Structure probing data (2A3 and DMS) for a 177-nucleotide construct. The reactions ran in a buffer of 150 mM KOAc, 10 mM MgCl2 and 150 mM bicine (pH 8.5), at 24 C. Source: RMDB library OK2TRN, as collected in RNAgym.
RNA sequence: GGGAACGACUCGAGUAGAGUCGAAAAGGACAUGGAUUGUUUAGAAGAUUCAGGAUCUUUUGUAUUGCAUAAGUAUUUACCUGGAGUCCAUAUUGGAACGACGAUGCAAACUGCAAUUAAACGAACACUCUACUCGACAUUUCGAUGUCGAGUAGAGAAAAGAAACAACAACAACAAC
Reactivity to 2A3 in 0.01 (KOAc 150mM, MgCl2 10mM, bicine 150mM(pH8.5), 24C), signal-to-noise 2, nucleotides 027 to 126: g050g000a010c020a080u020g000g010a020u050u130g120u200u220u210a190g000a230a050g010a060u030u030c030a000g130g050a170u050c010u010u090u000u060g130u050a020u000u050g000c020a010u000a040a080g000u080a030u080u070u050a080c040c040u070g020g040a120g050u000c020c000a060u160a170u300u250g030g010a060a020c010g060a020c010g000a000u020g010c020a020a070a070c060u030g010c000a030a050u070u090a180a080a020c050g010a060a000c050a010
Reactivity to DMS in 0.01 (KOAc 150mM, MgCl2 10mM, bicine 150mM(pH8.5), 24C), signal-to-noise 3, nucleotides 027 to 126: g010g020a030c020a170u000g000g010a020u000u000g020u010u000u010a110g000a110a260g000a030u000u000c030a020g010g020a180u000c010u000u010u000u000g020u010a020u020u000g000c010a020u010a030a090g020u000a020u010u000u000a110c190c090u010g000g010a170g020u010c000c010a100u010a170u020u010g020g010a050a040c040g020a120c110g000a040u000g010c020a020a050a110c270u010g000c020a040a030u020u010a060a050a070c070g010a050a130c300a040
For DMS, 1,501 sequencing reads were counted. For 2A3 the reverse transcriptase was SuperScript II with manganese.